About this RNA: This 177-nucleotide RNA was probed chemically with 2A3. 2A3 adducts were read by reverse transcription with SuperScript II with manganese.
RNA sequence: GGGAACGACUCGAGUAGAGUCGAAAAGAUAUGGAGAUCGAAUGGCUUGGAUUUACAUGUGUUUGUACCUCUAUUCGGAAACGAAUAGAGGUAUGAUACAUGUUGUCAGCCAUAGAUCUCCUAAGUCCUGAGCUUUUGAGUUCGCUCAAAAGCUCAGAAAAGAAACAACAACAACAAC
Reactivity to 2A3 in 0.01 (KOAc 150mM, MgCl2 10mM, bicine 150mM(pH8.5), 24C), signal-to-noise 1, nucleotides 027 to 126: g180a040u140a050u150g010g000a010g000a000u010c050g030a270a300u050g010g000c130u200u300g240g020a090u300u300u230a000c000a000u010g040u000g040u040u120u260g000u060a000c210c000u090c000u000a010u000u000c010g080g060a120a100a130c000g030a030a000u000a000g000a010g000g010u010a020u000g000a000u000a000c010a040u010g000u010u000g000u010c000a000g010c000c000a010u010a000g000a000u010c000u010c000c000u010a010a010g000u000c000